[RMDB]
RNA sequence: GGGAACGACUCGAGUAGAGUCGAAAAAAUCGGGCUGGCUCAUCCUCGAUUGCGAGCGGCGGUCCUGAGAACUCUUAUCUUCCUGCUUAGAAGAGGAGUCUCCUGGACGCCCCGCCCGGUCGGGAUGCAAGGACGGAGUUCGCUCCGUCCAAAAGAAACAACAACAACAAC
Reactivity to 2A3 in 0.01 (KOAc 150mM, MgCl2 10mM, bicine 150mM(pH8.5), 24C), signal-to-noise 7, nucleotides 027 to 129: a020a030u060c020g010g020g000c010u030g040g020c020u010c030a010u000c010c020u100c070g010a010u020u080g070c170g040a150g040c000g010g000c050g020g020u020c000c000u020g020a070g010a100a050c010u000c000u030u050a090u090c000u000u040c020c020u110g150c130u240u230a030g000a000a000g020a000g010g000a000g020u020c010u000c040c070u000g010g010a030c030g270c020c000c000c000g000c000c000c000g000g010u010c000g000g010g000a020u020g040c080a070a070
Reactivity to DMS in 0.01 (KOAc 150mM, MgCl2 10mM, bicine 150mM(pH8.5), 24C), signal-to-noise 4, nucleotides 027 to 129: a080a020u060c050g020g000g030c030u060g000g000c070u010c000a080u050c030c010u000c040g010a100u010u050g040c120g000a170g020c100g040g000c300g060g030u030c000c060u000g020a120g010a050a070c000u020c020u010u050a010u090c010u000u000c020c060u050g040c230u040u110a170g020a040a000g020a020g000g010a040g010u010c040u040c050c060u000g010g000a000c020g050c010c090c010c010g030c000c050c000g000g000u020c000g040g000g030a070u000g020c050a130a070